[RMDB]
RNA sequence: GGGAACGACUCGAGUAGAGUCGAAAAGUGCAAUUCGUUGCACGACCGUCCUAAGUCACCCGUGGAGGCGAAAGGGAGCAAUAUCGGAAACGAUAUUGCGAAGAACUUUCGCUACCCACCCACCGGUGAUAUGGAAAAGCUGAACCUUCGGGUUCAAUAUGCGAUUAUCUUUCGAGAUAAUCGCAUAAAAAGAAACAACAACAACAAC
Reactivity to DMS in 0.01 (KOAc 150mM, MgCl2 10mM, bicine 150mM(pH8.5), 24C), signal-to-noise 1, nucleotides 027 to 156: g020u020g000c020a030a010u000u000c170g000u000u000g010c000a000c000g030a140c010c050g010u010c080c000u040a040a210g000u010c030a000c000c000c090g000u000g040g020a300g010g010c020g010a010a040a000g010g010g000a300g010c010a000a020u000a000u000c000g000g030a250a060a250c000g070a000u000a000u000u010g000c000g000a020a120g020a170a250c030u010u000u000c020g000c000u000a000c040c030c040a300c170c000c000a030c010c080g030g040u000g010a030u000a120u000g000g010a000a060a070a130g000c080u000g000a010a030c030c000u000u000c300g060g000g030u000u000c000a050a070
Reactivity to 2A3 in 0.01 (KOAc 150mM, MgCl2 10mM, bicine 150mM(pH8.5), 24C), signal-to-noise 2, nucleotides 027 to 156: g000u000g000c010a010a020u070u070c250g090u180u000g010c000a000c000g010a010c000c010g090u080c000c000u050a100a070g030u000c000a000c000c030c040g000u000g000g000a020g030g000c000g000a010a000a000g010g010g010a010g000c000a010a000u000a010u000c010g030g040a070a020a030c010g010a020u000a000u000u000g000c000g000a060a050g010a010a000c000u000u000u000c000g000c000u000a000c010c050c010a050c020c000c000a010c000c010g000g000u010g000a000u010a030u060g010g020a000a090a020a060g110c120u050g010a000a000c020c000u070u120c300g120g000g010u000u000c000a000a010